[RMDB]
RNA sequence: GGGAACGACUCGAGUAGAGUCGAAAAGUGACAGCAUGGGGCAGGGGCAGGGCUCUUGGGAACAGCACUUGAUGUUCAGCAGAACUGUUUAUUGGGCUAUUCGUGGGUCUGCAGUAAGUAUCCUAAGACUUCUUCCUUUUUUCGAAAAGGAAGAAGUAAAAGAAACAACAACAACAAC
Reactivity to DMS in 0.01 (KOAc 150mM, MgCl2 10mM, bicine 150mM(pH8.5), 24C), signal-to-noise 6, nucleotides 027 to 126: g000u010g000a120c060a060g010c050a080u010g020g010g000g010c110a090g010g000g010g010c150a100g000g000g010c080u010c080u000u010g010g000g010a160a080c110a050g010c050a050c060u000u000g000a070u000g020u000u000c050a100g020c090a080g020a050a080c030u000g010u010u000u000a070u020u000g010g000g000c070u000a070u010u000c070g010u010g000g010g000u000c020u010g020c020a040g010u010a030a090g000u000a080u000c010c020u010a070a110g010
Reactivity to 2A3 in 0.01 (KOAc 150mM, MgCl2 10mM, bicine 150mM(pH8.5), 24C), signal-to-noise 4, nucleotides 027 to 126: g050u030g040a050c020a020g040c040a090u090g010g030g060g060c100a080g050g020g020g050c080a060g040g030g020c030u020c000u190u050g020g010g010a060a030c010a010g020c030a020c050u020u100g020a030u070g060u070u020c020a020g000c010a010g050a060a020c020u030g060u070u090u040a170u070u080g050g000g000c020u010a030u090u070c070g040u090g040g020g010u000c020u030g000c000a020g030u070a090a010g020u020a050u040c010c010u040a080a010g040

Structure probing data (DMS and 2A3) for a 177-nucleotide construct.
Reactivities are given for positions 27 through 126.
The DMS profile rests on 7,902 reads.
For 2A3, 4,574 sequencing reads were counted.
For DMS the reverse transcriptase was MarathonRT.